[RMDB]
RNA sequence: GGGAACGACUCGAGUAGAGUCGAAAACGCGUACGGCCGAGGCCGGCCGCGCGCGGCCACGGUACGCGCCUACGAGUGCGCGCAGUACAUGAUCGUACCAGUACGGCGCUCGUACCGCGCGGCCCGCCUGUUUCGCCAUAUUCGUAUGGCGAAACAGAAAAGAAACAACAACAACAAC
Reactivity to 2A3 in 0.01 (KOAc 150mM, MgCl2 10mM, bicine 150mM(pH8.5), 24C), signal-to-noise 2, nucleotides 027 to 126: c000g030c010g000u020a000c010g030g000c050c040g090a070g290g300c170c000g030g020c000c030g010c000g000c000g010c000g010g020c000c020a020c000g000g000u090a030c010g010c000g000c000c000u000a020c020g000a000g010u050g050c060g000c030g000c050a020g020u070a030c090a170u180g060a230u250c100g010u030a000c050c010a040g040u050a030c070g050g000c000g000c010u000c020g000u010a050c020c010g000c000g000c000g000g000c010c010c000g010c010
Reactivity to DMS in 0.01 (KOAc 150mM, MgCl2 10mM, bicine 150mM(pH8.5), 24C), signal-to-noise 2, nucleotides 027 to 126: c010g040c010g020u010a050c020g000g000c040c040g030a110g030g050c230c060g040g030c010c000g020c000g020c010g030c040g010g000c050c040a090c050g000g010u010a020c020g020c020g020c000c100u000a010c030g000a160g040u010g010c020g000c070g050c000a100g000u000a010c110a140u000g010a090u000c190g010u000a080c030c160a140g010u000a060c060g030g010c000g000c000u000c010g020u000a000c100c160g010c010g000c020g000g000c020c000c050g000c080

This 177-nucleotide RNA was probed chemically with 2A3 and DMS. 2A3 adducts were read by reverse transcription with SuperScript II with manganese. Conditions: 150 mM KOAc, 10 mM MgCl2 and 150 mM bicine (pH 8.5), 24 C.